[RMDB]
RNA sequence: GGGAACGACUCGAGUAGAGUCGAAAAGACGGCAGUUCGGAACUAUAACGACAACGAACAGAUCCCAAGUUGUCGUUAUAACUGGACUGAGUACAGUUAGUUGUAUAGCAUACUCUUGGGAUCUGUUGUAUGCUAUAUAGUUCUAACUGUACUGUCACACUGGCCUUUUAUUCGUAAAAGGCCAGUGAAAAGAAACAACAACAACAAC
Reactivity to DMS in 0.01 (KOAc 150mM, MgCl2 10mM, bicine 150mM(pH8.5), 24C), signal-to-noise 1, nucleotides 027 to 156: g000a060c050g020g040c000a030g000u020u020c040g000g000a060a210c160u000a050u000a000a030c050g000a020c030a010a030c030g000a090a150c060a080g000a060u000c020c000c010a100a300g010u000u000g000u000c000g010u000u000a010u000a030a130c060u000g000g030a060c020u000g010a110g000u000a030c000a030g010u000u000a010g010u000u010g030u000a000u000a020g020c010a060u000a030c040u000c100u010u000g020g000g020a070u000c020u020g030u010u000g020u000a020u000g000c000u000a040u010a000u000a070g000u010u000c020u000a010a070c000u000g030u000a020c020u010g000u000c030a220
Reactivity to 2A3 in 0.01 (KOAc 150mM, MgCl2 10mM, bicine 150mM(pH8.5), 24C), signal-to-noise 3, nucleotides 027 to 156: g010a010c020g020g050c000a010g000u000u030c010g020g020a090a050c040u010a010u010a020a000c010g040a010c000a030a000c040g180a050a020c050a060g000a020u010c000c000c020a050a050g010u020u010g010u000c010g000u000u010a000u000a010a010c000u030g020g000a000c010u010g020a010g060u010a010c000a000g000u000u010a030g000u070u260g010u020a010u000a010g000c010a010u010a040c000u030c020u090u060g010g000g000a010u000c000u000g010u020u070g000u000a010u010g000c000u000a000u000a010u010a050g110u080u040c000u000a000a000c010u000g000u000a030c010u030g010u000c000a000